This 207-nucleotide RNA was probed chemically with 2A3. For 2A3 the reverse transcriptase was SuperScript II with manganese.
[RMDB]
RNA sequence: GGGAACGACUCGAGUAGAGUCGAAAAUUGAUGUUUCCCAGCCAGGGAUUGUCAUCCUCAAGUUUCUUGAUUUUCUUCUUAACCUUCCGGAGGUCCCUCUCGAGUUCCUCUAACUUCUUUCUUCCACUCACCCACUGCUCGAGAACCUCUUCCCUGCGCAGAGUGUUAUGUUCGCAUAACACUCUGCAAAAGAAACAACAACAACAAC
Reactivity to 2A3 in 0.01 (KOAc 150mM, MgCl2 10mM, bicine 150mM(pH8.5), 24C), signal-to-noise 2, nucleotides 027 to 156: u150u110g050a010u060g040u010u020u000c040c010c030a020g090c100c080a040g030g040g000a060u100u170g040u080c010a030u060c060c040u090c080a140a000g050u040u060u020c060u100u080g030a100u160u050u100u080c010u100u000c020u090u050a110a160c010c030u050u090c050c090g080g010a010g000g020u030c020c000c000u030c020u030c030g040a030g060u070u050c030c010u030c010u040a110a050c000u060u050c020u080u190u000c000u050u090c040c010a020c020u060c010a070c030c030c000a070c040u020g010c000u000c000g010a030g000a100a100c010c000u000c020u000u010c000c000c000u030g000c010
The reactions ran in a buffer of 150 mM KOAc, 10 mM MgCl2 and 150 mM bicine (pH 8.5), at 24 C. Source: RMDB library VIROID, as collected in RNAgym.